[RMDB]
RNA sequence: GGGAACGACUCGAGUAGAGUCGAAAAUCAAGACCUCGUGCUGCCUUUAAGCAGCAGAGGCGUCGCCAUGUUCCACGUUGGAUUAGUGACAGUUUUCGAACGUGUUUGCCUAAGCCCUCCGGCAUACUGAAGGAACAGACGGUAAAUGAAGAGGAAAAGUUUUAUGGAUGUUCGCAUCCAUAAAACUAAAAGAAACAACAACAACAAC
Reactivity to DMS in 0.01 (KOAc 150mM, MgCl2 10mM, bicine 150mM(pH8.5), 24C), signal-to-noise 2, nucleotides 027 to 156: u020c040a060a140g020a090c000c000u000c000g030u010g070c020u000g030c010c030u010u000u010a150a070g040c000a010g010c020a140g000a010g040g030c000g000u010c000g020c040c010a120u000g000u000u020c010c010a120c120g040u000u010g040g000a060u000u000a040g010u020g020a200c160a110g010u000u010u000u000c060g010a020a040c020g060u010g010u000u000u000g000c000c010u000a060a170g040c060c010c000u000c050c060g030g000c030a160u020a100c030u010g010a120a110g050g020a060a040c060a040g010a040c030g020g020u000a000a090a120u000g000a100a070g020a090g000g000a040a070a110
Reactivity to 2A3 in 0.01 (KOAc 150mM, MgCl2 10mM, bicine 150mM(pH8.5), 24C), signal-to-noise 2, nucleotides 027 to 156: u110c040a030a050g180a230c010c020u050c050g230u130g010c000u000g040c000c020u230u270u170a160a040g000c000a000g040c010a000g000a000g000g000c010g000u000c070g000c020c030a150u070g030u020u020c030c000a010c030g010u000u020g110g000a030u020u040a090g110u070g180a080c050a090g060u070u050u000u000c050g050a020a010c010g030u060g030u040u120u060g050c010c000u100a140a110g050c010c000c010u060c090c000g010g000c000a000u000a010c020u090g130a130a020g000g000a000a000c010a000g040a030c070g000g030u010a020a070a070u170g070a030a080g000a030g070g070a040a110a000
Source information:
Conditions: 150 mM KOAc, 10 mM MgCl2 and 150 mM bicine (pH 8.5), 24 C. Chemical mapping of a 207-nucleotide RNA with DMS and 2A3. High 2A3 reactivity points to a flexible backbone, as in loops and unpaired stretches. Values are in units of 0.01, from 0 to 300, in steps of 10. The data come from the RNA Mapping Database (RMDB), library OK3TST. DMS adducts were read by reverse transcription with MarathonRT. The 2A3 profile rests on 1,080 reads.